[RMDB]
RNA sequence: GGGAACGACUCGAGUAGAGUCGAAAACGUAGGCAUAAUUGGAAUUGUGUGGAUUGUGACACUGCAGGUGUGGGGAAUACCUUCAUCUGUGAAGAAGUCGCAAAUGACCUCACUACCGCCCUACGCACGCCCCGAUUCUUCGGAAUCGGGAAAAGAAACAACAACAACAAC
Reactivity to 2A3 in 0.01 (KOAc 150mM, MgCl2 10mM, bicine 150mM(pH8.5), 24C), signal-to-noise 9, nucleotides 027 to 129: c000g010u000a000g000g010c070a110u080a190a160u300u300g040g040a110a140u250u070g020u010g010u020g000g030a020u010u000g000u000g010a010c010a010c050u030g020c000a000g000g010u000g000u010g010g010g010g030a080a150u250a290c000c000u000u000c000a010u000c000u010g010u030g020a060a020g030a090a020g010u000c000g000c010a010a050a060u150g110a140c000c000u020c010a000c000u020a040c000c030g020c010c000c010u000a000c010g000c040a050c060g070c010
Reactivity to DMS in 0.01 (KOAc 150mM, MgCl2 10mM, bicine 150mM(pH8.5), 24C), signal-to-noise 4, nucleotides 027 to 129: c020g030u000a070g000g050c140a090u040a130a130u150u110g060g020a110a060u050u010g020u010g040u010g000g000a170u040u000g000u000g020a020c030a100c060u050g000c010a030g060g000u020g000u020g020g000g060g040a200a110u130a200c020c040u010u050c020a030u040c030u000g020u030g000a060a010g000a090a110g030u000c020g020c030a010a000a000u000g050a100c020c000u010c010a040c000u030a080c040c030g050c170c010c010u020a010c040g020c070a050c100g030c090
Record summary
Chemical mapping of a 170-nucleotide RNA with 2A3 and DMS. 2A3 adducts were read by reverse transcription with SuperScript II with manganese. The DMS profile rests on 15,632 reads. Reactivities are rounded to 0.1 and cut off at 0 and 3. The RNA was probed in 150 mM KOAc, 10 mM MgCl2 and 150 mM bicine (pH 8.5) at 24 C. As a SHAPE reagent, 2A3 marks flexible, mostly unpaired nucleotides at the ribose 2'-OH.